[RMDB]
RNA sequence: GGGAACGACUCGAGUAGAGUCGAAAACUAUGGCCAAUUUAGAAGAUAAAGGCAUCCUUUUUACUUCCAGAGUAAUUAUUGCUACCACAAAUCUCAAUGACUUUGCCCCUACCACCAUUGCUGAUCCGAUAGAAAAUCGUUUCGACGAUUUUCUAUCAAAAGAAACAACAACAACAAC
Reactivity to 2A3 in 0.01 (KOAc 150mM, MgCl2 10mM, bicine 150mM(pH8.5), 24C), signal-to-noise 3, nucleotides 027 to 126: c020u060a140u130g080g010c020c060a070a010u100u100u080a160g010a130a030g010a050u070a090a120a010g030g030c010a050u060c000c010u030u070u000u030u100a060c010u080u060c040c040a030g000a030g170u060a080a080u070u090a050u170u120g000c020u030a050c000c040a040c030a060a150a100u030c060u030c040a030a140u100g050a100c040u060u070u190g010c020c000c000c000u000a060c010c010a000c000c000a040u040u070g010c020u010g020a070u060c010c030
Reactivity to DMS in 0.01 (KOAc 150mM, MgCl2 10mM, bicine 150mM(pH8.5), 24C), signal-to-noise 3, nucleotides 027 to 126: c080u000a040u010g000g020c020c030a050a080u010u000u000a090g010a090a080g010a100u000a030a070a080g000g050c100a090u010c030c010u010u000u030u000u000a060c050u000u010c050c090a100g000a100g020u000a050a080u000u010a050u010u000g020c030u000a050c060c000a060c050a060a060a070u000c050u000c070a030a070u000g010a060c050u000u000u000g010c040c000c010c030u010a070c070c040a050c080c070a050u020u010g010c050u000g000a090u000c100c110
This 177-nucleotide RNA was probed chemically with 2A3 and DMS. The 2A3 profile rests on 1,992 reads. Values cover nucleotides 27 to 126.